[RMDB]
The record gives the reactivity of an RNA of 177 nucleotides to DMS and 2A3. Reactivities are given for positions 27 through 126.
RNA sequence: GGGAACGACUCGAGUAGAGUCGAAAAGGACACGAGAUCAUUGCAAUCAUCCGGAUGGUCGAGGCAAUCUUCAUGGACGAGAGCAAUCUUUGUGAAGCCGAGGCUCCCAUCAAAGUCAUCGGAGACAUAGUAGCCUAAUCUUCGGAUUAGGCUACUAAAAAGAAACAACAACAACAAC
Reactivity to DMS in 0.01 (KOAc 150mM, MgCl2 10mM, bicine 150mM(pH8.5), 24C), signal-to-noise 3, nucleotides 027 to 126: g030g040a140c040a030c020g000a050g000a070u010c110a070u010u000g010c010a050a230u000c020a110u020c010c020g010g010a030u000g000g000u000c110g000a090g020g020c110a080a040u010c020u000u010c040a060u010g030g010a060c060g000a020g000a300g010c060a060a020u000c000u000u010u030g040u000g000a080a170g010c020c000g010a040g030g000c070u000c020c020c040a090u010c200a070a040a070g000u010c030a060u010c050g000g020a130g000a040c120a140
Reactivity to 2A3 in 0.01 (KOAc 150mM, MgCl2 10mM, bicine 150mM(pH8.5), 24C), signal-to-noise 2, nucleotides 027 to 126: g040g020a000c010a000c020g050a050g000a030u080c050a120u090u090g020c000a020a020u020c000a010u000c030c000g010g010a000u020g040g080u070c120g050a160g040g110c060a040a070u010c020u050u050c010a110u180g040g010a020c050g000a020g010a020g000c010a030a000u050c020u020u160u250g060u040g070a070a000g000c000c000g020a020g000g060c020u000c020c000c000a030u080c060a020a130a030g060u020c000a070u040c140g110g010a040g010a060c040a030